[RMDB]
This 207-nucleotide RNA was probed chemically with 2A3 and DMS. As a SHAPE reagent, 2A3 marks flexible, mostly unpaired nucleotides at the ribose 2'-OH. It was measured as part of the RMDB library OK3TST.
RNA sequence: GGGAACGACUCGAGUAGAGUCGAAAAUGAGCCUUUGAAGUUCGGCGACGAGGAGCAUCACAAGUGUGAGAUGCUUGAUACCGUGAGGAUUUCCUUCUGCAUCCAACGUCACGAUUUCUGGGAGGACAUCGUACGUAUCCUCUGCGAUGAGACCGUAGUGCAUAGCAUCUUUCGAGAUGCUAUGCACAAAAGAAACAACAACAACAAC
Reactivity to 2A3 in 0.01 (KOAc 150mM, MgCl2 10mM, bicine 150mM(pH8.5), 24C), signal-to-noise 3, nucleotides 027 to 156: u130g010a050g050c020c030u040u050u120g090a080a050g010u090u100c010g010g020c090g030a010c010g020a070g010g020a000g040c010a030u100c040a020c030a130a080g090u110g030u100g220a150g010a060u030g070c000u010u080g000a030u050a080c030c110g010u050g030a050g000g040a050u030u060u130c030c000u060u100c040u070g040c030a080u020c050c010a080a040c030g020u050c100a000c080g030a050u020u060u050c050u080g030g030g010a100g060g000a030c010a050u010c010g010u040a040c050g030u030a050u070c000c030u000c020u000g000c030g010a030u050g000a000g070a040c050c020g050u130a080
Reactivity to DMS in 0.01 (KOAc 150mM, MgCl2 10mM, bicine 150mM(pH8.5), 24C), signal-to-noise 1, nucleotides 027 to 156: u000g050a100g000c010c030u000u000u000g010a050a090g030u000u000c030g030g030c050g020a070c030g030a240g010g000a100g070c040a030u000c040a120c060a090a130g020u000g020u020g010a090g000a060u000g000c000u010u000g010a180u010a040c050c020g000u000g000a140g020g000a240u000u010u030c040c060u000u000c070u010g020c070a090u010c000c020a100a090c040g020u000c030a050c000g040a040u010u000u000c010u000g050g020g000a130g030g020a050c040a060u000c040g030u000a050c050g040u000a070u000c040c020u020c010u000g030c030g000a120u000g000a200g010a160c020c000g010u010a160